Chemical mapping of a 177-nucleotide RNA with DMS. Source: RMDB libraries RFM100 and RFMREP, as collected in RNAgym. Values are in units of 0.01, from 0 to 300, in steps of 10.

[RMDB]
RNA sequence: GGGAACGACUCGAGUAGAGUCGAAAAGAAUUCCCUGAAUGUGACGCAAAUCACUUCAAAGAGUGAGCAACAGUCAGUAUCAUCAUGUGAGUUAAACCCUCGCCGCCUGACGGUGAGGGUUUUCUUUAAAGUCAGUAACAUUCGUGUUACUGACUUUAAAAGAAACAACAACAACAAC
Reactivity to DMS in 0.01 (KOAc 150mM, MgCl2 10mM, bicine 150mM(pH8.5), 24C), signal-to-noise 4, nucleotides 027 to 126: g000a130a300u000u000c000c000c000u010g000a030a050u010g020u010g000a020c010g000c180a120a130a120u000c010a000c010u010u000c130a090a120a160g000a030g010u010g000a030g000c120a120a100c190a100g000u000c020a020g010u000a040u000c020a050u020c180a070u030g000u000g000a090g000u000u000a030a030a010c000c010c000u000c000g020c000c000g000c020c220u030g020a100c000g000g040u000g010a000g010g010g000u000u000u000u000c000u000u000u000